Chemical mapping of a 177-nucleotide RNA with 2A3 and DMS. Conditions: 150 mM KOAc, 10 mM MgCl2 and 150 mM bicine (pH 8.5), 24 C.
[RMDB]
RNA sequence: GGGAACGACUCGAGUAGAGUCGAAAAUUUUAAUUCUGCUAUACCGUAUUCUGUUACAAUAUAGUCAACAUCAUUUCUUGAUGUCGUUAUAGGUGCACCUUCAUCCACAAUAGAUACGAUUUUUGAAGAGCCAUUAUUAGUUCGCUAAUAAUGGCUCAAAAGAAACAACAACAACAAC
Reactivity to 2A3 in 0.01 (KOAc 150mM, MgCl2 10mM, bicine 150mM(pH8.5), 24C), signal-to-noise 4, nucleotides 027 to 126: u120u100u050u080a090a130u120u040c020u080g100c060u070a080u050a110c010c030g000u020a060u090u050c020u030g070u080u090a080c070a150a020u060a020u040a120g170u160c080a030a020c000a010u050c000a010u030u240u130c120u050u100g000a010u020g020u010c010g000u020u040a050u010a120g080g000u050g020c020a060c060c000u070u110c020a070u060c000c020a040c020a020a120u090a090g050a000u030a060c050g080a110u030u040u020u030u070g150a200a150
Reactivity to DMS in 0.01 (KOAc 150mM, MgCl2 10mM, bicine 150mM(pH8.5), 24C), signal-to-noise 2, nucleotides 027 to 126: u050u030u000u010a030a090u020u000c050u000g000c070u000a050u010a110c130c050g040u000a030u020u000c120u040g000u010u020a060c140a080a100u000a000u000a000g000u030c040a020a060c000a020u000c000a000u000u010u060c050u010u000g000a000u000g000u000c060g010u020u000a060u010a030g000g020u000g000c080a010c090c020u020u000c030a050u010c010c020a050c070a050a070u080a040g010a020u030a020c120g010a110u020u000u000u000u000g000a160a130

For 2A3, 2,694 sequencing reads were counted. Values cover nucleotides 27 to 126.